Source: RMDB library M2PK90, as collected in RNAgym.
Structure probing data (DMS) for a 177-nucleotide construct.
[RMDB]
RNA sequence: GGGAACGACUCGAGUAGAGUCGAAAAAGAGUACGGCCGCAAGGUUUCCGGUUGUGGAUGGCAGCGAGUGUGUCGCCCCGUCGUCUAGUGCUGGUUCUAGGGCUGGGGCGUCAGCAUCCAGGUAAAACCACCAGUAAGCAUUCGUGCUUACUGGUGGAAAAGAAACAACAACAACAAC
Reactivity to DMS in 0.01 (KOAc 150mM, MgCl2 10mM, bicine 150mM(pH8.5), 24C), signal-to-noise 1, nucleotides 027 to 126: a080g010a090g010u010a070c130g010g020c000c020g040c080a070a080g000g000u000u010u010c050c000g060g010u020u010g040u010g000g000a040u010g020g010c040a060g010c060g000a060g010u000g010u010g000u000c020g010c000c000c000c020g000u000c010g010u010c010u000a000g010u000g000c110u020g010g010u010u000c020u000a040g000g010g010c020u020g010g000g000g010c030g020u000c000a060g020c040a040u000c010c000a040g020g000u010a060a060a080a200

For DMS the reverse transcriptase was MarathonRT.